[RMDB]
RNA sequence: GGGAACGACUCGAGUAGAGUCGAAAACGGACAGACAGUGGUGACAGCGCUCCAGGCUGUCCAGAGCAAAGUCACGAAGCAGCAGUCGGCUAGCCGCGAGAUCAGCGCGAGUCUCGUUGCCAAGUAACUCCCGCUACCAGUUCGCUGGUAGCGGGAGAAAAGAAACAACAACAACAAC
Reactivity to 2A3 in 0.01 (KOAc 150mM, MgCl2 10mM, bicine 150mM(pH8.5), 24C), signal-to-noise 1, nucleotides 027 to 126: c000g130g170a000c000a000g020a000c000a000g160u000g020g190u050g080a000c020a030g040c160g020c010u040c000c000a110g070g000c000u080g070u090c000c010a000g060a000g040c130a030a160a000g010u140c000a000c080g040a220a090g000c190a000g000c000a000g050u000c040g000g000c000u000a030g000c060c090g010c040g110a000g000a150u050c080a030g010c000g090c080g120a000g000u000c000u030c050g000u000u040g110c060c000a180a000g000u000a030a040